Chemical mapping of a 177-nucleotide RNA with DMS and 2A3. The reactions ran in a buffer of 150 mM KOAc, 10 mM MgCl2 and 150 mM bicine (pH 8.5), at 24 C. Reactivities are given for positions 27 through 126. Values are in units of 0.01, from 0 to 300, in steps of 10.
[RMDB]
RNA sequence: GGGAACGACUCGAGUAGAGUCGAAAACAAGAUCAGCUUCAUCUUUGUAAUCAAUUUCUUCAUAGGUUUCAGCUGGUUUUAAGGAUAAUGCUCUAGCUGGACCGGAACCUAAUGCAAAGAAGUCACCCACUCACGCCCUAUUCGUAGGGCGUGAGUGAAAAGAAACAACAACAACAAC
Reactivity to DMS in 0.01 (KOAc 150mM, MgCl2 10mM, bicine 150mM(pH8.5), 24C), signal-to-noise 1, nucleotides 027 to 126: c080a160a050g000a110u020c180a120g000c020u050u030c140a010u000c000u000u010u020g030u010a000a190u030c270a120a130u000u000u000c010u010u020c060a050u000a010g000g000u020u000u000c040a050g000c010u000g000g040u000u000u000u030a000a090g010g010a300u030a050a090u000g030c040u020c020u000a020g000c010u000g000g000a010c000c050g000g020a000a030c020c030u000a030a020u000g000c050a000a040a020g000a000a040g000u000c000a170c050c120
Reactivity to 2A3 in 0.01 (KOAc 150mM, MgCl2 10mM, bicine 150mM(pH8.5), 24C), signal-to-noise 4, nucleotides 027 to 126: c060a010a010g040a060u240c050a030g060c070u110u030c020a100u030c030u020u100u060g030u060a080a100u150c050a080a100u040u030u040c050u120u010c020a080u040a100g020g050u040u120u190c000a000g020c020u010g010g090u070u030u050u100a080a040g080g000a060u120a180a030u240g060c070u010c010u050a010g000c000u030g000g010a120c000c020g000g000a010a010c010c020u080a150a010u050g000c040a050a000a000g010a080a000g040u070c000a100c050c010